[RMDB]
RNA sequence: GGGAACGACUCGAGUAGAGUCGAAAAGGUUAUCUGCCAGUAGCUGUGCGGUGCCGAGAAUACCGUACAGCGGUGUGCGGAUCUCAUGGCUCAUCGCCGCCAGAAACGCCGAUUUUGCCUGGCUGGACCAGCAGUGAGUCUUCGGACUCACUGCUGGAAAAGAAACAACAACAACAAC
Reactivity to DMS in 0.01 (KOAc 150mM, MgCl2 10mM, bicine 150mM(pH8.5), 24C), signal-to-noise 1, nucleotides 027 to 126: g030g010u000u000a060u020c030u000g000c020c010a080g000u000a200g000c000u000g060u000g030c020g000g000u000g030c110c070g000a160g000a110a140u000a010c000c010g030u000a030c010a000g020c010g000g000u020g050u000g030c020g020g010a050u000c060u040c040a200u020g000g010c000u000c230a170u020c110g020c120c040g030c030c080a090g000a050a020a210c080g000c090c060g000a170u000u000u000u010g040c080c020u000g000g010c030u000g040g000a260
Reactivity to 2A3 in 0.01 (KOAc 150mM, MgCl2 10mM, bicine 150mM(pH8.5), 24C), signal-to-noise 1, nucleotides 027 to 126: g010g010u040u040a020u050c000u010g040c000c010a110g100u080a000g000c000u010g020u020g010c030g000g020u030g000c050c030g060a080g010a080a130u130a020c010c000g000u010a010c000a010g000c050g010g020u040g040u060g000c030g040g040a060u000c010u000c030a210u100g030g030c020u040c100a120u100c080g000c050c010g000c030c020a020g080a010a080a000c020g010c030c020g030a030u100u110u050u280g020c100c010u050g080g000c020u030g020g000a050

Source: RMDB library OK2TST, as collected in RNAgym. The record gives the reactivity of an RNA of 177 nucleotides to DMS and 2A3. 2A3 adducts were read by reverse transcription with SuperScript II with manganese. For DMS the reverse transcriptase was MarathonRT. The 2A3 profile rests on 919 reads.